[RMDB]
RNA sequence: GGGAACGACUCGAGUAGAGUCGAAAAUAAUAAUAGGAUUGAGGAGAAACAAACAUGUAACGCGCGAAGCUUUGUCUUUUUUUUCCCUUCCUGAUUCUGAAACGACUAACGGUUGCGCGCUAAAUAAUCGGAAGUAUUAGUUCGCUAAUACUUCCGAAAAAGAAACAACAACAACAAC
Reactivity to DMS in 0.01 (KOAc 150mM, MgCl2 10mM, bicine 150mM(pH8.5), 24C), signal-to-noise 2, nucleotides 027 to 126: u000a070a140u000a080a140u000a030g020g010a030u000u000g020a060g000g010a070g000a080a030a020c130a060a090a070c110a090u000g000u000a050a090c170g010c020g040c030g000a060a110g010c100u000u000u000g000u000c000u000u000u000u000u000u000u000u000c000c000c010u000u010c000c000u010g000a070u000u000c020u000g000a060a060a080c130g000a040c070u010a040a080c120g010g000u000u000g000c010g000c020g000c020u000a010a100a080u000a060a090